[RMDB]
RNA sequence: GGGAACGACUCGAGUAGAGUCGAAAACAUCAAAGAUGCGUACCAAGCUGCGUUUCAACCUGCGUGGGUUGAGGCGGCUUAGCGGAUUAAGGCGUUCUGCCCUAGUGGUCCAUUACCCCAUGCAAAGUCUGCAUGCAGGCGGGGUAGUGUGCUGCUCGGAUAAGGACAGCUUCGGCUGUCCUUAUCCAAAAGAAACAACAACAACAAC
Reactivity to 2A3 in 0.01 (KOAc 150mM, MgCl2 10mM, bicine 150mM(pH8.5), 24C), signal-to-noise 2, nucleotides 027 to 156: c040a080u110c080a070a150a000g060a060u100g170c040g000u040a040c070c100a000a040g010c010u070g060c010g070u080u080u020c000a000a000c000c000u180g110c200g270u300g080g000g020u000u000g000a000g010g020c000g000g000c040u010u000a000g000c000g010g080a020u060u150a180a040g040g000c010g000u060u010c030u190g040c050c000c000u000a000g000u020g000g030u040c020c000a000u000u000a020c000c000c020c000a030u100g060c000a090a060a080g040u060c100u070g060c060a050u010g020c010a020g040g140c080g020g000g000g000u000a010g020u000g000u010g020c000u000g000c000u010c080